[RMDB]
Chemical mapping of a 207-nucleotide RNA with 2A3.
Conditions: 150 mM KOAc, 10 mM MgCl2 and 150 mM bicine (pH 8.5), 24 C.
Reactivities are rounded to 0.1 and cut off at 0 and 3.
The data come from the RNA Mapping Database (RMDB), library M2RFPK.
RNA sequence: GGGAACGACUCGAGUAGAGUCGAAAACAUAGCGUUUCACGAUGUGCGCCAUUAACAUUGUUUAUGCAAGCACGUUUCGCAAUGUACGGCGCAGAAACAUUGCCAACACAAAUACGCUUCACGAUGUAAAACAUCGGUGCGUUCGCGCACCGAUGAACUGGACUUAUGACUUCGGUCAUAAGUCCAGAAAAGAAACAACAACAACAAC
Reactivity to 2A3 in 0.01 (KOAc 150mM, MgCl2 10mM, bicine 150mM(pH8.5), 24C), signal-to-noise 2, nucleotides 027 to 156: c020a060u140a040g020c060g030u030u080u140c070a020c090g060a110u060g020u030g050c000g030c010c020a020u090u220a090a020c040a050u060u060g100u090u200u140a160u100g070c070a040a150g080c170a110c200g040u060u080u060c020g010c000a020a000u000g030u070a050c060g000g000c010g000c000a000g020a010a050a000c030a020u030u090g040c080c040a180a020c050a050c000a010a190a040u080a070c020g020c020u030u040c090a090c050g120a080u160g060u260a130a130a030a010c000a000u000c000g040g000u000g010c000g000u020u030c100g000c060g000c020a000c000c000g000a000u000g000a000a000